An RNA of 177 nucleotides, treated with 2A3 and DMS and read out base by base.

RNA sequence: GGGAACGACUCGAGUAGAGUCGAAAAGGAUGGUACCUCCGGCCUCAGCACACCGGGUGCGCUGGAAGCGGCCAAGCUCUAUAAAUCCAUGAUCGACGACGGGCUAACGCAGCCCGGCGUUACCUCAAGGGCUAAAUUUAUUCGUAAAUUUAGCCCUAAAAGAAACAACAACAACAAC
Reactivity to 2A3 in 0.01 (KOAc 150mM, MgCl2 10mM, bicine 150mM(pH8.5), 24C), signal-to-noise 1, nucleotides 027 to 126: g030g030a020u120g040g020u060a090c060c000u000c000c050g060g000c000c020u090c020a060g020c050a020c010a050c120c090g180g010g080u030g020c040g000c010u060g040g020a140a020g090c020g030g000c000c000a080a020g000c010u000c000u070a120u050a110a120a080u000c000c020a030u100g090a080u110c100g010a030c010g020a000c000g010g000g040c010u070a200a030c130g050c110a000g000c020c050c000g000g000c000g010u000u080a080c000c000u050c040a100
Reactivity to DMS in 0.01 (KOAc 150mM, MgCl2 10mM, bicine 150mM(pH8.5), 24C), signal-to-noise 3, nucleotides 027 to 126: g000g020a090u000g010g010u000a080c070c010u000c080c080g010g000c050c070u020c070a060g000c020a070c060a080c070c200g020g020g040u000g000c050g020c040u010g010g010a080a080g020c100g000g010c020c030a080a100g000c050u010c030u000a110u010a050a080a080u010c010c020a090u020g000a150u010c090g000a050c010g010a040c040g020g000g020c040u010a070a120c240g010c200a100g000c000c000c000g020g000c010g000u000u000a070c080c050u000c140a130

Record summary: The data come from the RNA Mapping Database (RMDB), library OK2TST. For DMS, 2,166 sequencing reads were counted.